Record summary:
Chemical mapping of a 207-nucleotide RNA with 2A3. The data come from the RNA Mapping Database (RMDB), library RNAMAK. Conditions: 150 mM KOAc, 10 mM MgCl2 and 150 mM bicine (pH 8.5), 24 C. The 2A3 profile rests on 675 reads.

RNA sequence: GGGAACGACUCGAGUAGAGUCGAAAAGUGAUAACUUCGGUUAUCACAAAAAACCUUUGUGAAUCAUGCAUCCUUGGAUUUAGCGAACCCAUUGGGUUCGCUUGUCAGGAUUCCCAUGAGUUCACUCUGGUAAAAAACUCGGCGUUCGCGCCGAGAAACCACUAGUCCUAUUCGUAGGACUAGUGGUAAAAGAAACAACAACAACAAC
Reactivity to 2A3 in 0.01 (KOAc 150mM, MgCl2 10mM, bicine 150mM(pH8.5), 24C), signal-to-noise 1, nucleotides 027 to 156: g020u000g000a000u010a040a000c000u010u010c130g040g010u000u010a000u030c000a010c000a020a010a010a010a010a010c010c010u110u010u020g010u010g000a010a010u000c000a010u000g000c010a000u040c000c040u120u140g250g010a070u300u300u090a000g000c010g000a000a000c040c040c140a300u240u300g000g000g000u040u000c010g020c000u000u030g000u000c000a000g000g030a000u030u010c050c000c010a040u000g100a200g170u000u010c010a010c010u010c000u000g000g000u040a060a030a000a140a070a060c000u000c010g040g020c020g050u110u080c240g040c010g000c110c000g000a000g010a060a000